[RMDB]
RNA sequence: GGGAACGACUCGAGUAGAGUCGAAAAGAUAUGGAUAUGCGCCGUGCCAGUCCAGCGUUGAAAUCGGAAACGAUGGAGCUGAACUGGCGGGGCAUAUCCUAAGUCAAAAGACGUGUUCGCACGUCAACCUAAGUGACCGGUUCGCCGGUCACUUAGGAAAAGAAACAACAACAACAAC
Reactivity to 2A3 in 0.01 (KOAc 150mM, MgCl2 10mM, bicine 150mM(pH8.5), 24C), signal-to-noise 1, nucleotides 027 to 126: g030a000u100a100u100g010g000a000u010a020u030g070c300g220c030c030g170u300g050c000c000a000g030u050c000c000a010g000c000g220u300u080g050a040a030a000u010c000g030g030a090a020a010c030g000a000u020g130g000a040g040c000u010g000a030a000c000u020g000g000c020g000g040g000g010c010a000u000a000u050c000c000u000a020a010g040u000c020a020a030a070a140g010a010c020g000u020g020u060u100c250g100c110a010c010g020u000c020a000a050
Reactivity to DMS in 0.01 (KOAc 150mM, MgCl2 10mM, bicine 150mM(pH8.5), 24C), signal-to-noise 1, nucleotides 027 to 126: g010a040u000a300u000g000g000a000u000a010u000g010c000g020c000c000g020u040g000c010c000a020g000u000c000c000a000g020c000g010u000u030g030a170a140a010u010c000g000g000a160a130a220c010g030a020u000g000g010a100g040c000u010g000a020a000c000u000g010g000c000g000g010g000g000c000a000u000a010u000c000c000u000a000a120g010u000c040a050a080a250a130g000a010c010g010u000g010u000u000c160g030c000a020c000g010u000c000a080a100